[RMDB]
RNA sequence: GGGAACGACUCGAGUAGAGUCGAAAAGGACUUGGGUGUGUUUCCUGACCGCACGCGAGUGGGGGGUGGCAGCUGAGAGGCACUUUUGUGUCGGCUUCUGGGCCACCUCUUGUGGGUGUGUGGGGACCCCCAAAAUAAGUUUCGACUUAUUUUGGGGAAAAGAAACAACAACAACAAC
Reactivity to 2A3 in 0.01 (KOAc 150mM, MgCl2 10mM, bicine 150mM(pH8.5), 24C), signal-to-noise 9, nucleotides 027 to 126: g070g020a030c040u050u040g020g020g020u120g020u020g010u070u020u020c010c010u020g080a050c010c000g000c000a010c000g020c000g030a030g040u110g000g010g000g010g000g000u000g010g000c010a140g070c020u030g010a000g000a010g020g050c010a010c000u110u170u230u300g010u010g000u000c010g110g100c020u160u060c060u130g030g020g000c000c000a000c000c000u000c000u000u000g010u030g020g170g020u020g000u000g000u010g000g000g000g020a020c000
Reactivity to DMS in 0.01 (KOAc 150mM, MgCl2 10mM, bicine 150mM(pH8.5), 24C), signal-to-noise 2, nucleotides 027 to 126: g010g000a080c090u020u010g000g020g010u020g010u020g010u010u000u010c000c010u010g020a180c020c000g010c010a020c000g000c000g000a300g030u000g020g000g010g010g000g040u000g010g000c000a040g010c020u000g010a010g000a260g000g010c010a010c000u010u000u010u020g020u010g010u010c010g000g000c030u010u000c040u000g010g000g010c000c010a000c000c020u010c010u010u000g010u040g010g010g010u010g020u000g020u010g000g010g030g010a110c120
This 177-nucleotide RNA was probed chemically with 2A3 and DMS. Conditions: 150 mM KOAc, 10 mM MgCl2 and 150 mM bicine (pH 8.5), 24 C. It was measured as part of the RMDB libraries RFM100 and RFMREP. Reactivities are given for positions 27 through 126.